An RNA of 177 nucleotides, treated with 2A3 and read out base by base. It was measured as part of the RMDB libraries RFM100 and RFMREP. The RNA was probed in 150 mM KOAc, 10 mM MgCl2 and 150 mM bicine (pH 8.5) at 24 C. For 2A3 the reverse transcriptase was SuperScript II with manganese.
RNA sequence: GGGAACGACUCGAGUAGAGUCGAAAACCUCAGCUAGAUCAUGGGAGCUGAGUGCAAACUGUUGAUUUCAGUGCAGCUGGCGUGUGGCUGGCUCACUGGAAACAGGUUUGCAUGAGAACUUCGCCAAUUCAGCGUGGUCAUUCGUGACCACGCUGAAAAAAGAAACAACAACAACAAC
Reactivity to 2A3 in 0.01 (KOAc 150mM, MgCl2 10mM, bicine 150mM(pH8.5), 24C), signal-to-noise 2, nucleotides 027 to 126: c000c000u020c000a000g000c000u060a000g030a240u120c060a080u170g080g010g030a000g000c000u010g040a020g010u000g000c000a000a000a000c000u000g290u300u180g130a060u000u000u000c000a000g000u000g040c170a000g000c030u000g010g000c130g060u300g090u120g300g000c000u000g000g000c000u010c000a000c000u000g000g000a010a060a010c000a010g030g000u000u000u000g000c000a000u040g000a010g000a010a020c030u090u090c060g000c120c100a070a180